RNA sequence: GGGAACGACUCGAGUAGAGUCGAAAAGACGUAAUCCGCGCAAAUCCACAAACGCCAACGAUGAGCGUUUCGCUGUAGCCGCUUAAGGCAACAGCCGGGGCCGCCUGAGCCAUGUUACCAAAGACGGGAAACUCGAUGCCAUUCGUGGCAUCGAGAAUCUUCUACGGACUUUCGAGUCCGUAGAAGAAAAAGAAACAACAACAACAAC
Reactivity to 2A3 in 0.01 (KOAc 150mM, MgCl2 10mM, bicine 150mM(pH8.5), 24C), signal-to-noise 1, nucleotides 027 to 156: g030a000c000g010u060a070a050u060c030c060g010c020g000c100a200a150a060u140c010c010a050c080a100a030a000c040g020c020c010a070a020c120g180a280u160g030a090g040c000g010u030u030u060c050g000c020u030g010u040a040g000c000c010g000c080u150u150a100a070g000g000c000a010a010c030a020g000c000c020g020g000g000g050c000c040g040c010c000u030g000a000g000c000c030a070u110g040u040u070a080c020c030a040a050a020g040a060c080g010g000g040a070a020a040c000u000c000g000a000u000g000c000c000a010u030u060c130g090u060g000g040c040a000u000c000g000a010g000a000a000

The record gives the reactivity of an RNA of 207 nucleotides to 2A3.
The RNA was probed in 150 mM KOAc, 10 mM MgCl2 and 150 mM bicine (pH 8.5) at 24 C.
It was measured as part of the RMDB library M2RFPK.